[RMDB]
Structure probing data (2A3 and DMS) for a 207-nucleotide construct.
High DMS reactivity at an A or C suggests that its Watson-Crick edge is free.
For 2A3 the reverse transcriptase was SuperScript II with manganese.
RNA sequence: GGGAACGACUCGAGUAGAGUCGAAAACAUGGGGAACUACAUCUGUGUCGCGAGUUCGAUUCUCGCCAGGGCCUGGUACUGUAGCUCAGUUGGUAGAGCAAGCUGUUCCCCGGACACUUGUCGUCAUAAAAGUUGCCCCCGUUCGCGGGGGCAACAACCAUGAUUAAACGUUCGCGUUUAAUCAUGGAAAAGAAACAACAACAACAAC
Reactivity to 2A3 in 0.01 (KOAc 150mM, MgCl2 10mM, bicine 150mM(pH8.5), 24C), signal-to-noise 1, nucleotides 027 to 156: c030a160u130g000g010g000g010a000a000c030u090a040c050a070u070c030u030g000u010g040u080c010g000c010g000a000g000u000u050c000g000a070u070u000c000u000c000g020c030c010a000g040g100g030c020c030u100g060g080u180a040c010u030g010u080a020g000c000u000c050a060g020u190u160g150g110u130a000g010a000g000c010a010a000g030c010u040g000u000u010c000c030c000c000g010g010a010c030a000c030u050u270g050u150c000g040u050c060a070u120a140a060a020a010g010u000u010g010c010c000c000c000c010g030u010u000c110g030c020g020g020g000g000g000c000a000a000c000a000a000
Reactivity to DMS in 0.01 (KOAc 150mM, MgCl2 10mM, bicine 150mM(pH8.5), 24C), signal-to-noise 2, nucleotides 027 to 156: c000a160u000g010g010g000g000a060a040c030u000a080c080a070u010c050u000g010u040g050u010c000g070c000g010a040g020u000u000c090g000a300u000u010c010u000c000g010c020c040a130g040g040g000c020c050u010g020g000u000a050c030u010g020u000a090g000c030u000c010a050g020u010u000g040g010u010a170g010a070g000c030a120a130g010c060u000g050u000u000c000c000c000c000g010g000a050c050a070c280u010u010g010u000c010g000u000c090a110u000a010a130a060a170g030u000u000g010c020c000c000c000c010g040u000u000c280g040c080g000g000g050g080g000c000a000a000c000a050a080
Conditions: 150 mM KOAc, 10 mM MgCl2 and 150 mM bicine (pH 8.5), 24 C. For DMS, 2,011 sequencing reads were counted. For 2A3, 838 sequencing reads were counted.